[RMDB]
RNA sequence: GGGAACGACUCGAGUAGAGUCGAAAAGAUAUGGAAUGGUGAGAGAAGCGACGACUAUCCCUGGAUCCCUCGGAAACGAGGGAUCCAGGGACGAAUCGUCGAACUACUUUGGUACCAUUCCUAAGUCCAUAUGCCUGUUGUUCGCAACAGGCAUAUGAAAAGAAACAACAACAACAAC
Reactivity to DMS in 0.01 (KOAc 150mM, MgCl2 10mM, bicine 150mM(pH8.5), 24C), signal-to-noise 2, nucleotides 027 to 126: g010a110u020a300u000g010g000a040a020u000g010g020u000g020a230g010a240g000a170a040g010c010g000a010c010g000a010c070u010a300u000c000c000c000u000g010g010a000u020c000c010c000u010c010g000g010a090a110a160c010g020a020g000g000g000a000u010c000c010a000g000g010g010a020c060g010a000a050u000c000g010u000c000g010a050a040c060u000a260c010u000u000u000g030g010u010a090c010c000a030u010u000c000c000u000a030a100g000u000c020